Chemical mapping of a 177-nucleotide RNA with DMS and 2A3.
DMS adducts were read by reverse transcription with MarathonRT.
The DMS profile rests on 898 reads.
Values are in units of 0.01, from 0 to 300, in steps of 10.
2A3 is a SHAPE reagent: it acylates the 2'-hydroxyl of flexible nucleotides of all four kinds.
Values cover nucleotides 27 to 126.
The reactions ran in a buffer of 150 mM KOAc, 10 mM MgCl2 and 150 mM bicine (pH 8.5), at 24 C.
It was measured as part of the RMDB library OK2TRN.
2A3 adducts were read by reverse transcription with SuperScript II with manganese.

[RMDB]
RNA sequence: GGGAACGACUCGAGUAGAGUCGAAAAUUGCGUCGUGGUCGUAUAACCAAUACAUCCGAAACAACACCCCUAACACGUGGGAGUCACAAUCGGUCAUUCUCGCGUGGAUGACUGGAUGUGUGGCACACUGGAUCGGGUGAUUCGUCACCCGAUCCAGAAAAGAAACAACAACAACAAC
Reactivity to DMS in 0.01 (KOAc 150mM, MgCl2 10mM, bicine 150mM(pH8.5), 24C), signal-to-noise 2, nucleotides 027 to 126: u010u000g000c300g000u000c020g000u000g000g020u000c030g060u000a010u020a080a180c190c130a050a150u010a060c050a060u020c000c030g010a010a030a150c090a030a030c120a140c050c000c000c040u000a050a070c130a080c250g000u000g010g020g000a190g050u000c060a000c000a050a020u000c000g020g000u000c000a010u000u010c000u000c300g020c230g020u030g010g020a000u000g000a030c020u000g010g000a000u000g000u010g020u000g000g010c000a110c150a040
Reactivity to 2A3 in 0.01 (KOAc 150mM, MgCl2 10mM, bicine 150mM(pH8.5), 24C), signal-to-noise 1, nucleotides 027 to 126: u080u010g000c030g000u020c020g070u160g040g000u070c050g000u080a070u020a080a080c080c100a010a020u090a060c030a000u000c000c020g010a080a040a000c050a040a010c010a090c030c000c020c010u030a140a020c060a040c140g040u050g070g050g000a070g020u030c010a000c000a000a040u000c020g040g030u030c000a010u020u070c050u000c060g180c000g120u160g020g020a000u000g010a000c010u100g260g000a060u080g040u000g000u000g230g000c030a000c000a000